This 177-nucleotide RNA was probed chemically with 2A3 and DMS.
RNA sequence: GGGAACGACUCGAGUAGAGUCGAAAAGAACUCACCAGCAAAUGUUUACGACAAGAUUCGACAUUUGCAAAUUACGUAGCGAUCUUCCAGAAUCUUGUCGAAACGUUCGCAAUCGCUACGCCCUAAAAUCAGCACAAACAUUCGUGUUUGUGCUGAUAAAAGAAACAACAACAACAAC
Reactivity to 2A3 in 0.01 (KOAc 150mM, MgCl2 10mM, bicine 150mM(pH8.5), 24C), signal-to-noise 1, nucleotides 027 to 126: g020a070a030c050u040c100a060c030c030a030g000c000a010a040a070u080g030u080u090u080a140c040g000a000c000a000a000g000a000u010u020c020g010a000c060a140u140u140u210g030c000a050a010a000u120u080a050c090g010u020a010g000c020g030a000u050c080u160u040c140c000a050g020a000a000u010c000u000u000g020u000c000g000a000a000a000c000g010u040u040c040g000c000a000a070u040c000g010c000u080a020c000g040c020c000c000u090a060a060a000
Reactivity to DMS in 0.01 (KOAc 150mM, MgCl2 10mM, bicine 150mM(pH8.5), 24C), signal-to-noise 2, nucleotides 027 to 126: g000a090a100c070u000c120a130c130c060a120g020c060a020a010a040u000g000u000u000u000a200c080g020a000c030a040a000g000a030u000u010c000g000a030c190a080u000u000u040g000c090a040a070a080u000u000a010c120g010u000a040g010c030g000a000u000c070u000u000c160c110a100g010a020a000u000c000u020u000g000u000c020g020a020a020a050c110g000u000u000c030g010c060a100a040u000c050g040c030u010a030c010g010c010c020c010u010a070a070a060

Background: Conditions: 150 mM KOAc, 10 mM MgCl2 and 150 mM bicine (pH 8.5), 24 C. DMS adducts were read by reverse transcription with MarathonRT. Values are in units of 0.01, from 0 to 300, in steps of 10. Source: RMDB library M2PK90, as collected in RNAgym. For 2A3, 1,486 sequencing reads were counted.